This 207-nucleotide RNA was probed chemically with 2A3 and DMS. DMS adducts were read by reverse transcription with MarathonRT. Reactivities are given for positions 27 through 156. The reactions ran in a buffer of 150 mM KOAc, 10 mM MgCl2 and 150 mM bicine (pH 8.5), at 24 C. For 2A3, 9,303 sequencing reads were counted. For DMS, 10,363 sequencing reads were counted.
RNA sequence: GGGAACGACUCGAGUAGAGUCGAAAAAGAUGUGUGACUCAUGUGAGUAGCCACAAGUGAUGAUAUUACUGCAUAUCAUCCACACAUGCAGUAUGUGUGACUCAUGUGACUACCCACAAGUGUUGAUAAGCCUCGUUAUCAACCACACAUCACGAGGCGUAUGUAGCUAGUUCGCUAGCUACAUACGAAAAGAAACAACAACAACAAC
Reactivity to 2A3 in 0.01 (KOAc 150mM, MgCl2 10mM, bicine 150mM(pH8.5), 24C), signal-to-noise 6, nucleotides 027 to 156: a000g000a010u010g010u000g010u000g030a040c020u030c140a080u040g000u000g000a010g000u000a000g000c000c000a010c000a020a030g070u010g060a010u000g000a010u000a010u040u090a130c090u090g080c040a000u000a000u000c010a000u000c010c000a010c000a000c000a010u050g020c030a060g100u290a010u010g000u000g000u010g020a020c010u010c090a050u040g000u000g000a010c000u000a000c000c000c000a000c000a010a020g010u010g000u020u030g010a010u000a000a020g030c030c040u090c040g040u000u010a010u010c000a000a000c020c000a000c000a000c000a000u000c000a000c040g040a020g010g040
Reactivity to DMS in 0.01 (KOAc 150mM, MgCl2 10mM, bicine 150mM(pH8.5), 24C), signal-to-noise 4, nucleotides 027 to 156: a070g010a040u000g020u010g030u010g010a210c070u000c060a200u010g030u000g010a020g020u000a020g020c010c020a020c020a040a090g030u010g000a020u000g000a050u000a020u000u010a160c140u010g010c090a080u000a010u000c020a050u000c050c110a050c040a050c020a020u000g020c100a210g010u000a030u000g010u000g030u000g000a160c090u000c090a130u010g010u010g030a010c010u000a010c000c010c000a010c000a060a070g010u000g010u000u000g000a090u000a050a110g010c050c060u000c070g020u010u000a090u000c040a050a070c040c020a020c000a010c000a050u000c020a100c080g010a050g000g000